[RMDB]
RNA sequence: GGGAACGACUCGAGUAGAGUCGAAAAGAUAUGGACCGAAGUCCUGAAAACGUAUGAGGCAACAGCUAUACGUCGGAAACGACGUGAUAGACAUGCCUCAUACGUUUUCAGGUCACGGUCCUAAGUCCUCAUGAGUGUUGUUCGCAACACUCAUGAGAAAAGAAACAACAACAACAAC
Reactivity to DMS in 0.01 (KOAc 150mM, MgCl2 10mM, bicine 150mM(pH8.5), 24C), signal-to-noise 2, nucleotides 027 to 126: g030a130u000a260u010g030g000a010c010c000g010a130a120g010u000c000c000u010g000a010a010a010a010c000g020u000a000u000g010a040g000g000c000a030a110c300a290g000c000u000a000u010a020c000g010u000c000g000g010a160a090a280c010g000a020c000g000u020g010a020u000a010g010a030c120a290u000g000c000c000u000c000a000u000a000c010g000u010u000u020u000c010a000g010g000u000c060a160c040g010g000u010c000c000u000a020a120g000u010c050
This 177-nucleotide RNA was probed chemically with DMS. Source: RMDB library TTRINS, as collected in RNAgym. DMS adducts were read by reverse transcription with MarathonRT.